This 177-nucleotide RNA was probed chemically with DMS and 2A3. The reactions ran in a buffer of 150 mM KOAc, 10 mM MgCl2 and 150 mM bicine (pH 8.5), at 24 C. High 2A3 reactivity points to a flexible backbone, as in loops and unpaired stretches. 2A3 adducts were read by reverse transcription with SuperScript II with manganese. For DMS, 1,445 sequencing reads were counted.

[RMDB]
RNA sequence: GGGAACGACUCGAGUAGAGUCGAAAAGGGUAACCAAACCAAGGAGGAAGGAGGUCGAUUGAUCAGAAUCUCUGAUGUUCUCAAGAGGAUAGAUCACAAGGACCUCGAGCAAUUCAAGAAAGAUGUAUCAUCAUGCACAUUUCGAUGUGCAUGAUGAAAAAGAAACAACAACAACAAC
Reactivity to DMS in 0.01 (KOAc 150mM, MgCl2 10mM, bicine 150mM(pH8.5), 24C), signal-to-noise 3, nucleotides 027 to 126: g010g020g010u000a130a130c100c060a080a080a170c060c020a110a150g010g020a060g000g010a140a200g010g030a010g020g020u000c010g030a300u010u000g020a020u000c000a050g010a160a080u000c000u030c040u000g010a120u020g000u010u000c040u000c030a090a010g030a050g000g000a210u000a030g000a000u000c000a020c150a090a110g000g000a030c010c020u010c010g000a100g010c100a140a130u000u000c050a100a110g000a100a060a030g000a090u000g000u000a160
Reactivity to 2A3 in 0.01 (KOAc 150mM, MgCl2 10mM, bicine 150mM(pH8.5), 24C), signal-to-noise 2, nucleotides 027 to 126: g010g000g000u050a000a070c020c000a060a000a070c000c020a090a050g090g030a020g010g000a040a010g060g020a000g000g000u010c010g100a170u000u140g000a000u040c010a000g080a110a020u050c030u000c030u030g020a070u140g110u280u130c040u000c060a080a030g000a000g020g070a040u210a140g010a000u000c020a010c010a010a090g140g000a000c000c000u020c000g010a010g010c000a080a100u100u100c030a080a070g070a040a060a030g110a110u130g080u190a140